[RMDB]
RNA sequence: GGGAACGACUCGAGUAGAGUCGAAAAAUCUUAAAAGUGAAGAUAACACCGCUGAAGGUGCCAGACCCUGAUUAUGAGGUGUAAUGCACUGGCAGUAUAAAAUAUCAGGCCGAGUGAAUGAUGAAGAAAUCACCGAUGUAUUCGUACAUCGGUGAUUAAAAGAAACAACAACAACAAC
Reactivity to DMS in 0.01 (KOAc 150mM, MgCl2 10mM, bicine 150mM(pH8.5), 24C), signal-to-noise 3, nucleotides 027 to 126: a100u000c010u010u000a050a070a100a120g000u000g010a080a100g000a080u010a070a100c040a040c010c190g010c060u000g020a100a070g010g040u000g010c000c200a150g000a070c100c000c010u000g000a160u000u000a040u000g000a070g020g010u000g010u000a090a190u010g000c040a050c010u000g000g000c020a020g000u000a060u000a060a040a060a070u020a040u010c040a090g010g010c080c030g000a110g000u000g000a040a080u000g030a080u000g010a090a120g000a080